[RMDB]
RNA sequence: GGGAACGACUCGAGUAGAGUCGAAAAGACCUUAACUUCGGUUAAGGUCAAAGAGCACUGAGCAGCGAAAGAAACGCUGCAAGCCGGAGUGCACGGCAAUAAAAAGGGUGUUCUUCGGAACACCCAACAGUGAUUUCAUGUUCGCAUGAAAUCACUGAAAAGAAACAACAACAACAAC
Reactivity to DMS in 0.01 (KOAc 150mM, MgCl2 10mM, bicine 150mM(pH8.5), 24C), signal-to-noise 2, nucleotides 027 to 126: g000a000c010c000u000u010a000a010c000u000u030c140g030g020u000u000a000a020g000g000u010c000a000a040a080g000a190g000c000a000c030u010g010a130g020c010a000g000c000g000a060a130a140g010a220a170a100c000g000c010u000g000c030a040a040g000c000c020g000g000a090g000u000g000c010a170c040g000g000c020a100a070u000a020a100a100a220a090g000g000g010u000g010u000u000c000u000u000c260g050g000a000a000c000a000c000c000c000a010a000
Reactivity to 2A3 in 0.01 (KOAc 150mM, MgCl2 10mM, bicine 150mM(pH8.5), 24C), signal-to-noise 2, nucleotides 027 to 126: g000a000c010c000u000u000a010a010c010u040u090c180g080g000u000u000a000a000g010g000u000c010a000a000a000g000a000g010c010a000c130u270g100a020g030c000a000g000c000g070a020a270a150g140a060a300a060c020g010c000u000g000c000a000a010g000c000c000g030g040a080g030u000g000c000a010c010g010g040c010a020a030u190a050a090a020a030a020g010g000g000u010g000u000u000c000u010u030c200g050g000a010a000c000a000c000c000c000a000a000